RNA sequence: GGGAACGACUCGAGUAGAGUCGAAAAGCUCUACCAGAAACUUCUGCCGAUAUUCUGGUGGUUGAUGAGGUUAGUAUGUGCACUAAUUAUGAUCUUUCAAUUAUUAAUGCACGUAUUAAAGCUAAGCGCAUCUGUAUAACUUCGGUUAUACAGAUGCAAAAGAAACAACAACAACAAC
Reactivity to DMS in 0.01 (KOAc 150mM, MgCl2 10mM, bicine 150mM(pH8.5), 24C), signal-to-noise 3, nucleotides 027 to 126: g020c020u000c060u000a030c000c000a040g010a100a040a150c140u010u000c030u010g020c170c060g010a110u000a080u010u010c090u030g020g010u000g000g000u010u000g000a050u010g000a200g000g020u000u000a010g010u000a000u000g000u000g010c000a030c040u000a010a020u000u000a080u010g000a060u000c190u010u010u000c030a050a110u000u000a010u000u000a010a010u000g000c000a000c000g010u000a000u010u000a030a050a090g010c050u000a080a120g010c280
Reactivity to 2A3 in 0.01 (KOAc 150mM, MgCl2 10mM, bicine 150mM(pH8.5), 24C), signal-to-noise 3, nucleotides 027 to 126: g000c010u000c030u020a010c000c000a050g070a090a170a160c030u060u030c030u100g110c040c040g040a060u040a080u190u070c030u070g000g000u020g010g010u090u040g040a080u070g020a020g030g040u030u030a000g000u000a010u000g000u020g000c000a000c010u000a020a020u010u050a030u060g050a050u050c150u060u300u070c080a140a160u060u020a000u000u000a030a020u000g000c000a000c000g000u000a000u020u030a040a050a000g060c010u030a040a040g060c020
An RNA of 177 nucleotides, treated with DMS and 2A3 and read out base by base. The reactions ran in a buffer of 150 mM KOAc, 10 mM MgCl2 and 150 mM bicine (pH 8.5), at 24 C. For 2A3, 2,787 sequencing reads were counted. Values cover nucleotides 27 to 126.